Structure probing data (2A3 and DMS) for a 207-nucleotide construct.
The RNA was probed in 150 mM KOAc, 10 mM MgCl2 and 150 mM bicine (pH 8.5) at 24 C.
Reactivities are given for positions 27 through 156.
In probing experiments dimethyl sulfate is read out at A N1 and C N3, which are open when not base-paired.
[RMDB]
RNA sequence: GGGAACGACUCGAGUAGAGUCGAAAAAAGAAGGAUACAAAUUCUGCAUAGAGUUUAAUUCAUUCUAGCUCAUUCAAAUUAUAUGUAGACAUAAGAAGCCUCUCAGGGCCAUAAUAUCCUACUGUGCUUCUGAUUGCUUUGUAAUUGUGCAAAAUCAAUGGAUUAAUGAUUUCGAUCAUUAAUCCAUAAAAGAAACAACAACAACAAC
Reactivity to 2A3 in 0.01 (KOAc 150mM, MgCl2 10mM, bicine 150mM(pH8.5), 24C), signal-to-noise 1, nucleotides 027 to 156: a000a030g080a010a010g030g000a020u040a300c030a040a080a000u000u030c030u040g000c030a040u080a070g000a010g030u100u030u070a080a090u230u250c060a040u130u070c060u120a040g020c000u010c030a110u190u150c110a090a080a030u110u150a040u050a030u100g040u060a030g000a060c000a020u180a070a050g050a150a020g040c030c000u000c000u030c100a010g000g000g060c020c010a010u130a150a040u080a110u040c010c010u000a000c060u040g070u130g060c010u100u130c000u000g010a010u070u070g000c010u170u040u000g090u060a020a100u070u070g040u090g070c020a000a020a210a050u250c030a040
Reactivity to DMS in 0.01 (KOAc 150mM, MgCl2 10mM, bicine 150mM(pH8.5), 24C), signal-to-noise 1, nucleotides 027 to 156: a070a060g000a130a060g010g020a060u010a150c050a060a140a210u000u000c020u000g000c090a060u020a090g010a030g010u000u000u000a080a070u000u000c080a090u000u010c040u000a110g050c060u000c020a080u010u000c050a020a080a100u030u000a180u000a040u000g000u000a050g000a090c080a100u030a150a060g000a030a080g020c000c030u000c060u000c120a090g070g000g000c080c080a090u010a120a080u000a050u000c030c000u000a070c050u010g030u000g030c010u010u010c030u030g020a130u010u000g010c030u000u000u000g010u000a050a090u000u020g000u010g000c070a060a050a070a100u000c040a120